Structure probing data (2A3 and DMS) for a 177-nucleotide construct. Conditions: 150 mM KOAc, 10 mM MgCl2 and 150 mM bicine (pH 8.5), 24 C. The 2A3 profile rests on 841 reads. Source: RMDB library OK2TST, as collected in RNAgym. For DMS the reverse transcriptase was MarathonRT.
RNA sequence: GGGAACGACUCGAGUAGAGUCGAAAAUGAGUACUUGCUCUACGCUGUGGAGAGGGAACUUUCGCAUCAAGGUCAGGUUUGGUAAAACCAAGUUUCACACGGGGCGCGUGGCUUUGUGUUAUCAACCGACAACUCUCAUGUUCGCAUGAGAGUUGUCAAAAGAAACAACAACAACAAC
Reactivity to 2A3 in 0.01 (KOAc 150mM, MgCl2 10mM, bicine 150mM(pH8.5), 24C), signal-to-noise 1, nucleotides 027 to 126: u100g020a000g020u050a080c080u050u130g120c000u000c010u040a070c140g150c250u210g020u020g100g000a050g000a030g000g070g000a040a040c070u140u110u060c060g010c050a040u060c020a080a060g000g000u010c070a050g040g000u010u080u110g070g000u080a060a040a040a070c010c030a000a020g000u080u090u070c030a020c010a000c020g090g040g050g000c070g060c050g040u000g010g000c050u020u050u080g020u030g010u060u100a150u050c020a020a010c070c040
Reactivity to DMS in 0.01 (KOAc 150mM, MgCl2 10mM, bicine 150mM(pH8.5), 24C), signal-to-noise 2, nucleotides 027 to 126: u000g010a060g020u000a090c060u010u000g020c010u010c010u000a050c120g020c150u000g000u000g010g000a070g000a070g010g030g000a110a040c040u000u000u000c090g010c110a050u020c090a050a070g000g010u010c060a110g010g000u010u000u000g000g000u000a030a100a030a150c020c050a060a030g000u000u000u000c030a060c060a070c110g000g020g000g010c030g010c090g040u010g010g000c020u000u000u020g000u000g000u000u000a030u010c060a040a090c140c080